[RMDB]
RNA sequence: GGGAACGACUCGAGUAGAGUCGAAAACGACCAGAGCUGGAGGGGAUCUUCGCCAGCGUCGAAAAGCGACCCCGGCUCACCAUGUUCGACGAUUUUGGUGGGCGGAUCCCGUCGGACAAGCCGCCGAGCCCAUACGACCGUUCGCGGUCGUAUGGGCAAAAGAAACAACAACAACAAC
Reactivity to 2A3 in 0.01 (KOAc 150mM, MgCl2 10mM, bicine 150mM(pH8.5), 24C), signal-to-noise 1, nucleotides 027 to 126: c020g040a060c030c100a020g030a050g100c140u100g000g000a030g000g240g000g010a070u010c000u030u050c000g050c050c000a000g010c000g020u030c000g010a100a100a000a000g050c010g030a140c000c010c010c010g020g010c040u150c000a040c000c000a070u160g060u080u080c050g030a030c170g010a170u000u020u130u300g000g000u070g020g040g020c110g000g000a010u060c050c050c000g090u080c000g000g010a010c050a140a000g070c020c000g000c010c010g000a000
This 177-nucleotide RNA was probed chemically with 2A3. The data come from the RNA Mapping Database (RMDB), library OK1LIB. The 2A3 profile rests on 515 reads.